Structure probing data (DMS and 2A3) for a 177-nucleotide construct. Conditions: 150 mM KOAc, 10 mM MgCl2 and 150 mM bicine (pH 8.5), 24 C. DMS adducts were read by reverse transcription with MarathonRT. It was measured as part of the RMDB libraries RFM100 and RFMREP.
RNA sequence: GGGAACGACUCGAGUAGAGUCGAAAAACGCGAGGAAAUCAGUCCACUGGACUGAUUUCUGAUCCCGCUUCGAUCCGUUGGAUAAUACGAUAAGACAAAUAAUUAGAGCGGUUCCAGUGACUCUGUUAAAGAGUCUUGUUUUCGAACAAGACUCUUUAAAAGAAACAACAACAACAAC
Reactivity to DMS in 0.01 (KOAc 150mM, MgCl2 10mM, bicine 150mM(pH8.5), 24C), signal-to-noise 4, nucleotides 027 to 126: a060c170g000c160g000a170g000g000a010a000a000u000c000a000g000u000c010c000a210c300u050g000g000a020c010u000g000a010u000u000u000c000u000g010a170u020c030c040c000g000c080u000u010c050g010a030u010c040c040g000u000u000g020g000a080u010a090a090u020a120c140g010a120u000a110a120g020a110c080a050a110a110u020a080a090u020u000a070g000a020g000c030g010g000u000u010c030c040a090g010u030g000a090c100u000c020u010g010u000u000
Reactivity to 2A3 in 0.01 (KOAc 150mM, MgCl2 10mM, bicine 150mM(pH8.5), 24C), signal-to-noise 5, nucleotides 027 to 126: a000c070g030c080g020a040g000g000a000a000a000u010c000a000g000u010c000c050a300c300u300g010g000a000c000u000g000a000u000u000u000c000u000g000a000u010c030c000c010g010c070u050u130c040g060a040u030c020c030g060u050u070g070g060a090u090a170a060u150a130c050g060a020u060a180a090g070a070c030a020a120a070u230a070a030u190u150a040g010a000g070c010g000g020u010u040c010c010a020g000u010g090a050c020u020c010u050g020u050u030